[RMDB]
RNA sequence: GGGAACGACUCGAGUAGAGUCGAAAAGAUAUGGAAGUCAAUAUGACAAGUCCAGUGGGAGAAGAGGGUCGGAAACGACCUGGCUUCAUCGAUCACUUAGGACUUGUCAUAUUGACUUCCUAAGUCACACUAUUGUACUCUUCGGAGUACAAUAGUGAAAAGAAACAACAACAACAAC
Reactivity to DMS in 0.01 (KOAc 150mM, MgCl2 10mM, bicine 150mM(pH8.5), 24C), signal-to-noise 5, nucleotides 027 to 126: g000a050u000a300u010g000g000a010a000g000u000c000a010a020u000a020u000g010a010c010a020a010g000u000c000c020a030g040u000g000g000g000a180g010a020a010g030a300g000g000g010u000c000g000g000a070a100a280c000g010a010c010c000u000g000g020c090u010u000c010a110u000c170g010a220u010c010a010c010u010u030a050g030g000a010c010u010u000g000u000c000a000u010a000u000u000g000a000c000u000u000c000c000u010a000a070g010u000c060a190